[RMDB]
RNA sequence: GGGAACGACUCGAGUAGAGUCGAAAAGUUUAUGCAAAGGCACUUCGCAAUGUGUGCUCAAACAUUGCUUAUUCAAACACGCUUCACAAUGUGCGACAAAGAAACAUUGUUAUAAGAGAUAAUGUUUACCACGCCUAAAGGUUCGCCUUUAGGCGAACGACAGUGACCCGUUCGCGGGUCACUGUCGAAAAGAAACAACAACAACAAC
Reactivity to 2A3 in 0.01 (KOAc 150mM, MgCl2 10mM, bicine 150mM(pH8.5), 24C), signal-to-noise 2, nucleotides 027 to 156: g040u070u170u080a190u150g070c110a130a070a100g140g030c020a020c040u030u080c040g010c080a040a070u040g020u000g020u000g030c090u080c190a010a080a000c000a020u020u020g000c030u140u210a170u190u120c040a000a060a000c040a000c050g000c010u030u040c000a000c020a030a000u000g000u020g010c020g010a030c150a150a170a020g040a010a060a000c010a000u010u010g010u040u070a140u040a140a040g030a000g000a000u060a080a050u110g000u030u020u020a090c030c070a020c010g000c010c000u000a000a000a000g000g050u040u040c160g110c040c000u010u000u010a000g020g000c010g000a000a000